An RNA of 177 nucleotides, treated with 2A3 and DMS and read out base by base. The data come from the RNA Mapping Database (RMDB), library RFMREP. 2A3 adducts were read by reverse transcription with SuperScript II with manganese.
[RMDB]
RNA sequence: GGGAACGACUCGAGUAGAGUCGAAAAAGACCAAGGGCUGUGAACCCGCCUGGGGAUGAGGCCUGGUCUUGUGGAACUGAACUUAGCUCGACGGGGCUGACCGCUCUGGCCCAGGGUGGUAUGUAAUAUAUUAUGAAUCGUUCGCGAUUCAUAAUAUAAAAGAAACAACAACAACAAC
Reactivity to 2A3 in 0.01 (KOAc 150mM, MgCl2 10mM, bicine 150mM(pH8.5), 24C), signal-to-noise 1, nucleotides 027 to 126: a030g000a000c020c000a130a140g050g010g020c020u060g060u080g230a040a040c030c020c000g090c080c210u190g020g020g000g010a030u100g080a030g030g040c000c000u020g040g030u000c000u010u070g030u090g070g050a070a060c090u030g030a020a010c030u150u060a040g000c000u020c040g070a080c080g040g000g020g000c000u020g030a000c000c010g000c000u010c010u000g050g020c000c020c010a020g000g020g000u020g010g020u030a050u100g050u040a110a060u060
Reactivity to DMS in 0.01 (KOAc 150mM, MgCl2 10mM, bicine 150mM(pH8.5), 24C), signal-to-noise 2, nucleotides 027 to 126: a010g020a050c010c000a080a090g020g010g020c010u010g030u010g020a130a210c010c010c030g000c220c210u020g020g010g010g000a090u000g010a220g000g000c000c000u000g000g010u010c010u000u010g010u010g020g010a080a110c120u000g000a090a080c110u000u000a060g020c010u000c000g010a080c170g000g000g020g000c040u000g000a050c030c020g000c010u000c020u000g010g010c030c030c010a280g000g000g020u000g000g000u000a040u020g000u000a100a120u000